[RMDB]
RNA sequence: GGGAACGACUCGAGUAGAGUCGAAAAAUCAGAGGGCGCUAUCAUGCAAACUAGGAUUGUCUGCUCAUGCACAGAACCAACUACCGAUAACUAACAGUGCAUGAAGGUUAGUUAUUCCAUAUUAAGUAAAACUCGUAAUUCUUCGGAAUUACGAGAAUCUUACGCUUGUGUUCGCACAAGCGUAAGAAAAAGAAACAACAACAACAAC
Reactivity to 2A3 in 0.01 (KOAc 150mM, MgCl2 10mM, bicine 150mM(pH8.5), 24C), signal-to-noise 3, nucleotides 027 to 156: a000u050c030a000g010a010g060g050g000c060g000c010u090a100u300c120a030u300g000c060a060a020a020c020u040a050g010g000a040u060u060g060u020c040u050g050c000u000c010a000u000g000c020a010c000a020g050a170a100c140c020a110a090c040u200a190c090c090g020a010u000a060a000c010u000a010a000c000a020g010u020g030c000a010u040g020a030a030g130g000u010u010a010g000u010u000a030u070u080c020c010a080u100a040u300u160a120a010g100u050a050a040a090a120c010u000c000g000u000a000a000u000u000c000u040u040c110g040g000a000a000u000u000a000c000g000a000g000a000a000
Reactivity to DMS in 0.01 (KOAc 150mM, MgCl2 10mM, bicine 150mM(pH8.5), 24C), signal-to-noise 2, nucleotides 027 to 156: a190u010c030a230g000a110g000g000g000c200g040c100u000a080u010c140a110u010g000c050a080a120a150c110u010a130g000g010a130u000u000g020u000c000u030g000c000u000c090a070u000g040c040a100c010a080g020a050a130c070c090a120a130c080u000a220c030c030g000a110u000a020a080c030u000a050a070c040a100g000u000g030c030a020u020g010a070a120g010g010u000u010a040g030u000u000a030u010u000c070c090a120u040a050u010u050a030a090g000u000a030a050a080a150c010u010c010g020u010a000a010u000u010c010u010u000c280g040g000a050a020u010u000a000c030g000a000g000a010a030